[RMDB]
RNA sequence: GGGAACGACUCGAGUAGAGUCGAAAAGUCGCCUCCUUCGGGAGGCGACAAAUACACAGACUACGCAACUCUGAAAAACACAACAAAAGUGUAAAAGCGUAGAAACAUCCACGUUCGCGUGGAUGAACGGUAUGAUACUGUUCGCAGUAUCAUACCGAAAAGAAACAACAACAACAAC
Reactivity to DMS in 0.01 (KOAc 150mM, MgCl2 10mM, bicine 150mM(pH8.5), 24C), signal-to-noise 2, nucleotides 027 to 126: g030u000c010g000c000c000u000c000c000u000u000c130g010g000g030a020g010g070c000g010a000c000a000a030a040u010a130c150a220c130a070g000a230c040u010a010c000g000c020a110a180c070u010c040u030g000a060a050a060a130a040c020a030c020a050a100c150a090a130a110a180g010u000g000u000a020a050a040a170g010c010g000u020a000g000a070a060a240c000a010u010c010c000a010c010g020u010u010c160g010c000g000u000g000g010a000u000g000a020a110
Reactivity to 2A3 in 0.01 (KOAc 150mM, MgCl2 10mM, bicine 150mM(pH8.5), 24C), signal-to-noise 1, nucleotides 027 to 126: g000u000c030g020c030c030u020c020c020u030u040c100g110g010g000a000g020g020c000g000a000c000a000a010a000u020a000c000a000c020a040g100a030c000u020a000c000g000c010a070a020c020u030c010u070g050a100a000a000a060a000c050a020c040a130a140c090a100a200a070a040g000u000g010u030a040a060a020a020g000c000g000u000a000g050a010a010a000c010a000u000c010c010a030c030g010u010u040c260g020c000g080u010g000g000a000u010g000a030a000